[RMDB]
RNA sequence: GGGAACGACUCGAGUAGAGUCGAAAACGUCGCCAUUGAGUACCACGCCGCCGACGUUAAGCUGGUGUUCGUGGGCGUCCGCCGGGGCCAAUACUGGCGGACCACGAUCGCACACGAGAUCGUCCACGUUAAGAACUACAUCGGCGACACGCUGGGGGGACGCUUGAAACUUCGGUUUCAAGCGUCCAAAAGAAACAACAACAACAAC
Reactivity to 2A3 in 0.01 (KOAc 150mM, MgCl2 10mM, bicine 150mM(pH8.5), 24C), signal-to-noise 2, nucleotides 027 to 156: c090g070u050c020g040c070c000a080u070u140g060a010g010u020a030c030c000a050c070g090c020c010g110c100c030g090a090c050g050u080u020a140a020g020c040u080g000g030u000g020u010u040c010g000u020g000g020g030c030g070u000c000c000g010c000c000g020g000g010g060c090c020a270a140u190a170c010u020g000g000c000g000g000a000c000c000a020c010g020a030u030c060g040c020a060c010a030c250g060a030g000a180u030c010g050u020c010c010a010c030g030u050u070a170a060g060a110a050c030u140a060c050a010u060c110g000g010c000g030a000c020a030c030g000c050u060g000g000g020g070